[RMDB]
RNA sequence: GGGAACGACUCGAGUAGAGUCGAAAAUUGAUUUCUAUGACUAAUCAUAGUUUCAGUGUGCAAAAACACAUUGGCGCUCCAGCAAACUUGCGUGUUGUUGGUCAUGCCAUGCAAGGCACUCUUUUGAAAGCGCCUAGAUUCGUCUAGGCGAAAAGAAACAACAACAACAAC
Reactivity to 2A3 in 0.01 (KOAc 150mM, MgCl2 10mM, bicine 150mM(pH8.5), 24C), signal-to-noise 7, nucleotides 027 to 129: u060u050g070a030u040u080u030c020u020a050u040g070a090c090u200a150a120u110c020a020u010a030g010u010u020u040c020a000g000u000g010u000g060c040a030a010a050a140a110c050a000c000a020u010u050g010g000c030g000c020u000c010c000a010g000c010a010a030a060c080u190u300g060c100g110u170g000u020u000g000u000u000g010g020u030c050a020u050g010c000c010a020u050g060c030a050a070g030g000c000a010c020u050c040u010u080u030u120g190a120a070a010g070
Reactivity to DMS in 0.01 (KOAc 150mM, MgCl2 10mM, bicine 150mM(pH8.5), 24C), signal-to-noise 6, nucleotides 027 to 129: u000u000g000a080u030u030u010c040u030a030u030g030a080c260u080a110a110u050c020a020u000a050g040u000u000u000c000a000g000u000g000u030g050c000a020a060a040a140a100c030a000c020a020u000u000g000g020c030g030c120u020c010c010a030g020c030a040a050a110c080u020u030g020c080g000u030g020u020u000g040u030u010g030g020u000c200a110u080g050c030c010a030u000g030c260a080a090g040g060c030a050c080u030c060u040u060u040u000g030a110a090a090g040